[RMDB]
RNA sequence: GGGAACGACUCGAGUAGAGUCGAAAAAACAAUACGCAUCAUGGUUUCAUGAGAAUCAAUAAUUAGUUAUGGAGUUAUAAUCAGGAAACGGAUAUAUGAUUCAGAAUGUUUCAUUUCUAACAUGUUUAAUUACCGUACGUGUUUACACUACGGUACCCCCACCCGCCAAAUUCGUUUGGCGGGUGGGAAAAGAAACAACAACAACAAC
Reactivity to 2A3 in 0.01 (KOAc 150mM, MgCl2 10mM, bicine 150mM(pH8.5), 24C), signal-to-noise 1, nucleotides 027 to 156: a000a000c130a120a040u190a120c080g080c030a070u010c040a000u030g170g030u130u260u280c010a000u050g030a020g050a110a020u010c060a040a020u040a120a040u110u080a010g050u080u050a060u150g050g040a040g010u060u040a130u130a300a090u110c050a050g020g190a050a000a100c060g050g020a010u050a020u000a000u080g010a010u060u000c030a020g060a180a060u050g030u000u000u030c050a010u070u020u000c050u020a050a000c000a050u120g110u000u100u040a130a130u070u040a030c000c000g010u000a000c090g000u030g000u010u150u080a010c000a030c000u000a000c040g000g000u000a020c010c000
Structure probing data (2A3) for a 207-nucleotide construct. Conditions: 150 mM KOAc, 10 mM MgCl2 and 150 mM bicine (pH 8.5), 24 C.